[RMDB]
RNA sequence: GGGAACGACUCGAGUAGAGUCGAAAAGAUAUGGAGAGUCCAUGGGCUUGAUGACCUUAGUUGUUCACGAAUUCGGAAACGAAUUCGUGAACAACUAAGCAAGAGUGCAUGGAGCUCUCCUAAGUCAUCUUGGAUGUAUGUUCGCAUACAUCCAAGAAAAAGAAACAACAACAACAAC
Reactivity to DMS in 0.01 (KOAc 150mM, MgCl2 10mM, bicine 150mM(pH8.5), 24C), signal-to-noise 1, nucleotides 027 to 126: g000a050u000a300u010g010g000a010g000a030g000u020c000c000a000u000g000g000g000c010u000u000g000a090u010g010a090c300c000u010u010a000g020u010u000g000u010u000c000a000c000g010a010a010u000u000c030g020g000a140a090a160c040g030a040a010u000u010c000g010u000g000a000a020c000a000a000c000u010a000a000g010c020a040a070g000a010g000u000g000c010a020u010g000g010a020g000c010u000c000u000c000c000u000a010a050g010u000c050a150